Chemical mapping of a 177-nucleotide RNA with 2A3. For 2A3, 331 sequencing reads were counted. Reactivities are given for positions 27 through 126. The data come from the RNA Mapping Database (RMDB), library OK1LIB. Conditions: 150 mM KOAc, 10 mM MgCl2 and 150 mM bicine (pH 8.5), 24 C.
[RMDB]
RNA sequence: GGGAACGACUCGAGUAGAGUCGAAAAAACAGAGCUGAUGAUACUUCGAGUGCAAUAAGUUUCAUUUGACAAUGAUAAGGAAGUGAUUCUAAAAUGUACGUCUACGCACUUAGGGUAUAGUUCCUUACCAUCCGGCUCGGUUCGCCGAGCCGGAUGGAAAAGAAACAACAACAACAAC
Reactivity to 2A3 in 0.01 (KOAc 150mM, MgCl2 10mM, bicine 150mM(pH8.5), 24C), signal-to-noise 1, nucleotides 027 to 126: a000a000c020a000g220a000g000c000u070g000a060u140g000a070u060a000c050u050u270c000g000a010g000u000g000c000a000a100u060a250a000g020u000u050u010c040a120u000u010u220g040a060c050a070a070u170g300a020u040a300a090g090g000a000a040g080u000g090a110u080u010c000u040a150a000a200a120u050g000u050a110c070g010u000c010u070a050c040g000c000a000c050u090u100a090g000g000g000u000a000u030a110g000u100u000c000c000u000u000a010